[RMDB]
RNA sequence: GGGAACGACUCGAGUAGAGUCGAAAAUUUUUAGUAAUGUUUGGAUUUAAUCAUCCAAUGACUAUUGUAAUUUAUGGUGUAGUAAUGGCGAUUGUAGGUGCGCUUGCAGGUUAUCUUGGUUCAAUCGAAUGGUACUGGAUUUCGAUCCAGUACCAUUAAAAGAAACAACAACAACAAC
Reactivity to 2A3 in 0.01 (KOAc 150mM, MgCl2 10mM, bicine 150mM(pH8.5), 24C), signal-to-noise 3, nucleotides 027 to 126: u100u090u050u000u030a050g030u060a100a180u220g050u020u020u040g030g010a030u010u030u190a060a000u120c030a000u000c000c020a000a000u020g000a000c000u000a000u100u110g040u250a000a160u080u040u060a160u180g040g000u070g010u000a070g020u070a090a150u100g010g040c040g030a040u010u070g080u090a030g060g030u060g050c010g000c060u010u030g000c020a040g010g060u110u150a060u030c030u000u110g050g030u070u050c040a100a110u050c060g110
Reactivity to DMS in 0.01 (KOAc 150mM, MgCl2 10mM, bicine 150mM(pH8.5), 24C), signal-to-noise 3, nucleotides 027 to 126: u010u020u020u010u000a010g010u010a010a100u070g000u000u000u000g000g000a010u010u000u000a130a100u060c300a040u010c000c000a010a000u020g010a010c030u000a000u020u010g020u050a020a040u000u000u000a090u020g000g000u000g010u010a050g030u020a050a080u010g010g010c100g020a070u020u000g030u030a040g030g010u000g010c090g010c050u000u010g020c100a060g000g010u010u010a050u010c060u030u010g000g010u000u000c060a050a080u010c140g000

Overview
Chemical mapping of a 177-nucleotide RNA with 2A3 and DMS. DMS adducts were read by reverse transcription with MarathonRT. The 2A3 profile rests on 912 reads. The RNA was probed in 150 mM KOAc, 10 mM MgCl2 and 150 mM bicine (pH 8.5) at 24 C. Source: RMDB library OK1LIB, as collected in RNAgym. Values are in units of 0.01, from 0 to 300, in steps of 10.